Source information
An RNA of 177 nucleotides, treated with DMS and 2A3 and read out base by base. For DMS, 2,252 sequencing reads were counted.
[RMDB]
RNA sequence: GGGAACGACUCGAGUAGAGUCGAAAAGAUAUGGAGUCUCGCGAUAAGCUAUAUGUCGGAAACGACAUGAUAGCUUUUGACGCGAGGCUCCUAAGUCAAAAGGCGAUCAGGUUCGCCUGAUCGCCAAGCAUACUUAUGGCUUCGGCCAUAAGUAUGCAAAAGAAACAACAACAACAAC
Reactivity to DMS in 0.01 (KOAc 150mM, MgCl2 10mM, bicine 150mM(pH8.5), 24C), signal-to-noise 2, nucleotides 027 to 126: g010a020u000a150u020g010g000a010g020u000c010u000c000g020c000g000a110u000a020a030g020c000u000a010u000a010u000g000u000c000g010g000a080a040a080c010g020a010c000a000u010g010a020u000a000g020c000u000u010u000u010g010a240c040g000c000g000a010g000g000c000u000c000c000u000a000a030g010u010c040a130a100a150a100g000g000c000g010a010u000c000a020g010g020u010u020c280g000c000c010u000g010a010u000c010g010c000c010a000a020
Reactivity to 2A3 in 0.01 (KOAc 150mM, MgCl2 10mM, bicine 150mM(pH8.5), 24C), signal-to-noise 2, nucleotides 027 to 126: g020a020u030a030u040g000g000a000g000u010c000u020c010g000c000g070a120u080a300a090g000c010u000a020u000a010u030g020u000c000g010g000a020a050a010c020g010a010c000a000u080g080a010u010a010g000c000u090u000u020u060g040a010c000g000c000g040a000g000g000c000u010c000c000u010a000a000g000u000c000a000a030a040a150g000g000c000g000a010u000c010a000g080g060u080u140c270g100c110c000u000g010a010u000c010g000c010c000a000a000
It was measured as part of the RMDB library TTRDEL.
The reactions ran in a buffer of 150 mM KOAc, 10 mM MgCl2 and 150 mM bicine (pH 8.5), at 24 C.
The 2A3 profile rests on 3,572 reads.